[RMDB]
RNA sequence: GGGAACGACUCGAGUAGAGUCGAAAAUCAUCGAUGCCAGUACUCUGCGGUAAAUUAUUGGUGUCGAAUACAAAUGAAAUGCACAUUUAUGCAAUCGUAAUGCACUUCCGCAGGAACCAUUGGACAACCGGCUAAAUUAGUUCGCUAAUUUAGCCGGAAAAGAAACAACAACAACAAC
Reactivity to 2A3 in 0.01 (KOAc 150mM, MgCl2 10mM, bicine 150mM(pH8.5), 24C), signal-to-noise 1, nucleotides 027 to 126: u040c030a010u000c000g010a010u040g010c010c000a000g050u050a040c030u030c000u200g000c000g010g010u140a070a100a100u070u060a050u010u030g030g000u000g000u050c010g000a000a050u160a060c060a030a190a030u130g060a050a000a100u110g100c040a030c030a050u180u290u240a130u110g000c050a070a060u040c050g110u190a150a000u070g030c000a010c110u090u000c010c020g000c030a020g000g000a030a030c020c030a110u070u120g070g010a000c010a020a050
Reactivity to DMS in 0.01 (KOAc 150mM, MgCl2 10mM, bicine 150mM(pH8.5), 24C), signal-to-noise 1, nucleotides 027 to 126: u000c060a060u000c010g010a000u000g000c000c020a030g040u010a080c300u000c060u000g000c010g000g020u050a070a070a070u020u000a040u020u000g000g000u000g020u000c020g000a040a050u000a090c240a040a120a090u000g000a100a020a170u020g000c020a000c160a090u010u010u000a090u010g000c060a090a170u000c140g030u010a050a080u050g020c020a040c040u000u000c020c010g000c020a000g020g000a050a090c130c060a150u000u000g000g020a150c190a060a070
The record gives the reactivity of an RNA of 177 nucleotides to 2A3 and DMS. The data come from the RNA Mapping Database (RMDB), library OK2TRN. 2A3 adducts were read by reverse transcription with SuperScript II with manganese. The DMS profile rests on 689 reads. The 2A3 profile rests on 857 reads. For DMS the reverse transcriptase was MarathonRT. Conditions: 150 mM KOAc, 10 mM MgCl2 and 150 mM bicine (pH 8.5), 24 C.